[RMDB]
RNA sequence: GGGAACGACUCGAGUAGAGUCGAAAAGAGGAGUCAUUCGUGACUCCUCAAAGGGAGCUCAAGUCUCCCGCUCAAGUCCGAGAGCCUUCGGACCCAAAAGAAUGCUGUUCCUGUUCGCAGGAACAAAUGCAUUAGUUUACUUCGGUAAACUAAUGCAAAAAGAAACAACAACAACAAC
Reactivity to DMS in 0.01 (KOAc 150mM, MgCl2 10mM, bicine 150mM(pH8.5), 24C), signal-to-noise 3, nucleotides 027 to 126: g000a000g010g000a000g020u000c000a030u010u010c220g030u000g000a000c000u000c000c000u000c000a010a030a090g030g000g000a000g000c040u010c280a120a120g000u010c000u000c000c000c000g010c040u010c050a100a110g000u000c010c000g000a020g000a070g020c140c090u000u000c000g000g010a040c000c070c080a040a070a120a090g000a110a070u000g020c120u010g010u000u000c000c000u000g000u000u010c150g020c010a000g000g010a010a010c000a010a040a060
Reactivity to 2A3 in 0.01 (KOAc 150mM, MgCl2 10mM, bicine 150mM(pH8.5), 24C), signal-to-noise 3, nucleotides 027 to 126: g000a000g000g000a000g010u010c010a000u100u110c190g080u090g010a010c000u000c000c000u000c000a000a000a010g000g000g000a000g000c010u080c300a010a160g100u030c010u000c000c000c010g020c000u040c020a050a010g020u000c010c000g000a020g000a050g220c010c030u070u000c000g010g000a000c000c030c020a070a150a010a020g180a100a070u160g060c070u050g040u000u000c000c000u020g030u030u020c300g030c050a000g020g000a010a000c000a000a040a000

Chemical mapping of a 177-nucleotide RNA with DMS and 2A3.
2A3 is a SHAPE reagent: it acylates the 2'-hydroxyl of flexible nucleotides of all four kinds.
The reactions ran in a buffer of 150 mM KOAc, 10 mM MgCl2 and 150 mM bicine (pH 8.5), at 24 C.
DMS adducts were read by reverse transcription with MarathonRT.
For 2A3 the reverse transcriptase was SuperScript II with manganese.
For DMS, 3,387 sequencing reads were counted.
Values are in units of 0.01, from 0 to 300, in steps of 10.
For 2A3, 4,162 sequencing reads were counted.